[RMDB]
RNA sequence: GGGAACGACUCGAGUAGAGUCGAAAAAUCGAAACCAUUAAUGUUAUGUCCGACUACAUAAAUUUCUAGGAAUAGCGGUUCACCUCUCAGCUUUAGUUUACUUAAUUCUGCGAAAGGCAGGUCACUGGCGCGUGUGUAACCUUGCUUGAGGGCCAAGAAUGACAUACCUGUUCGCAGGUAUGUCAUUAAAAGAAACAACAACAACAAC
Reactivity to DMS in 0.01 (KOAc 150mM, MgCl2 10mM, bicine 150mM(pH8.5), 24C), signal-to-noise 1, nucleotides 027 to 156: a090u030c040g000a140a120a180c030c020a110u000u010a050a070u010g030u000u000a030u000g000u010c050c040g010a170c030u010a050c010a020u000a030a030a080u000u000u010c070u000a130g030g040a050a100u000a050g030c000g030g030u000u000c040a070c040c000u000c030u000c060a040g010c020u000u010u010a040g030u000u000u000a070c090u000u000a070a130u000u000c040u000g000c050g030a090a100a070g000g000c000a030g030g020u000c060a010c060u000g020g020c060g010c080g040u000g010u010g000u030a040a030c040c020u010u000g000c040u000u000g000a090g000g000g000c040c040a090a050g000
Reactivity to 2A3 in 0.01 (KOAc 150mM, MgCl2 10mM, bicine 150mM(pH8.5), 24C), signal-to-noise 3, nucleotides 027 to 156: a020u110c060g020a070a000a060c020c000a050u080u120a110a100u170g020u130u090a040u070g020u050c020c060g090a090c020u060a010c080a080u150a040a200a120u110u230u150c110u070a050g010g020a040a030u020a050g010c000g010g030u090u100c020a050c030c000u040c000u000c020a020g010c030u110u170u060a020g050u040u140u030a030c000u020u010a060a070u200u050c010u030g040c010g060a190a020a010g130g000c040a060g000g030u040c050a030c080u030g070g020c010g020c010g030u050g000u000g020u040a000a010c020c010u020u030g000c000u030u030g050a020g020g000g000c000c000a030a030g060

Overview
This 207-nucleotide RNA was probed chemically with DMS and 2A3. Reactivities are given for positions 27 through 156. Conditions: 150 mM KOAc, 10 mM MgCl2 and 150 mM bicine (pH 8.5), 24 C. It was measured as part of the RMDB library OK3TST. 2A3 adducts were read by reverse transcription with SuperScript II with manganese.